Chemical mapping of a 170-nucleotide RNA with 2A3 and DMS.
For 2A3 the reverse transcriptase was SuperScript II with manganese.
The RNA was probed in 150 mM KOAc, 10 mM MgCl2 and 150 mM bicine (pH 8.5) at 24 C.

RNA sequence: GGGAACGACUCGAGUAGAGUCGAAAAUUCUUCGGUGAGCCCGCCUCUCCUCGUCGGUGAAGUCUCCCGCGCGGGUCCUCUUCCUAGGUCCGGAAUCAACCUCCAUCUGAUCUGUCCGGAGCUUUUUACAGCCAAUCCUUCGGGAUUGGCAAAAGAAACAACAACAACAAC
Reactivity to 2A3 in 0.01 (KOAc 150mM, MgCl2 10mM, bicine 150mM(pH8.5), 24C), signal-to-noise 4, nucleotides 027 to 129: u040u000c030u070u050c010g050g020u080g050a000g050c010c000c000g000c010c010u120c000u010c000c000u030c020g060u010c050g130g100u070g040a030a000g060u010c000u020c000c000c000g010c000g040c010g000g000g010u000c000c020u010c010u040u030c000c000u040a010g020g040u000c000c000g000g010a000a040u090c030a010a080c020c010u040c020c040a120u080c030u040g010a040u060c040u090g030u000c010c030g010g000a000g000c000u090u060u000u070u150a060c040a010
Reactivity to DMS in 0.01 (KOAc 150mM, MgCl2 10mM, bicine 150mM(pH8.5), 24C), signal-to-noise 4, nucleotides 027 to 129: u060u040c040u030u020c080g010g020u020g060a110g040c000c030c060g030c050c040u000c030u000c080c020u010c050g030u020c120g090g030u010g010a080a070g020u030c040u020c000c020c050g050c140g020c100g030g050g040u010c010c020u040c080u050u000c010c030u040a000g060g010u040c010c030g040g010a000a000u030c060a070a190c110c070u000c110c090a060u000c070u000g020a110u020c140u020g020u020c040c060g020g020a060g030c040u080u040u030u040u100a100c160a000